[RMDB]
RNA sequence: GGGAACGACUCGAGUAGAGUCGAAAAGACUCAGGGAGGUAGUAAACAGAAAUAAUGGCACAUGUUUUAAACAUGUGAUCGGAACGAAUGGUUUCUAAAUAAAACCAUGAAAGCAAUUGGAGGGCAAUGUUACCAAGGUAUUCGUACCUUGGUAACAAAAAGAAACAACAACAACAAC
Reactivity to 2A3 in 0.01 (KOAc 150mM, MgCl2 10mM, bicine 150mM(pH8.5), 24C), signal-to-noise 5, nucleotides 027 to 126: g010a000c030u020c040a010g020g040g030a030g040g030u060a000g010u020a050a120a050c030a050g140a030a140a010u240a050a090u180g040g000c000a000c010a010u010g060u020u080u120u190a100a210a010c000a010u000g010u010g030a040u060c000g030g030a030a050c070g040a070a030u020g010g000u020u030u040c100u090a070a080a070u200a030a030a020a000c010c000a000u010g030a060a070a010g050c060a030a100u070u060g030g030a060g000g020g000c050a050a030
Reactivity to DMS in 0.01 (KOAc 150mM, MgCl2 10mM, bicine 150mM(pH8.5), 24C), signal-to-noise 6, nucleotides 027 to 126: g000a060c040u010c040a100g010g010g000a040g010g000u010a090g010u020a070a080a110c120a090g000a080a110a060u020a070a130u030g000g000c000a020c000a010u000g000u000u000u040u020a070a060a040c010a000u000g010u010g000a030u020c040g010g010a100a070c120g010a100a020u000g000g000u000u000u000c040u010a070a100a100u030a100a000a010a010c000c000a020u000g010a070a070a120g020c080a060a070u020u020g010g010a110g000g000g000c120a070a080